[RMDB]
RNA sequence: GGGAACGACUCGAGUAGAGUCGAAAACACUAGCUGCAGCAGCAGUUGGCGCAAGCUGAGAUCCAGCUGCGCGUUGUCAGUCAGGGGGAUGGUAAGGGCCUCAUUGAACGGGGCGUUGGCCAGAGCCAGCGGAGAGAUACUUCGGUAUCUCUCCGCUAAAAGAAACAACAACAACAAC
Reactivity to DMS in 0.01 (KOAc 150mM, MgCl2 10mM, bicine 150mM(pH8.5), 24C), signal-to-noise 2, nucleotides 027 to 126: c040a130c060u000a030g010c010u000g000c020a120g010c120a110g010c020a040g000u000u010g010g020c080g000c030a040a090g020c060u010g010a140g020a190u000c060c010a020g000c010u000g010c000g030c110g020u000u000g000u010c060a050g000u010c070a080g000g010g000g000g010a220u000g010g010u030a070a120g000g000g020c020c000u000c010a040u010u000g020a090a130c210g020g010g000g050c040g000u000u010g000g000c020c010a090g000a260g030c110c100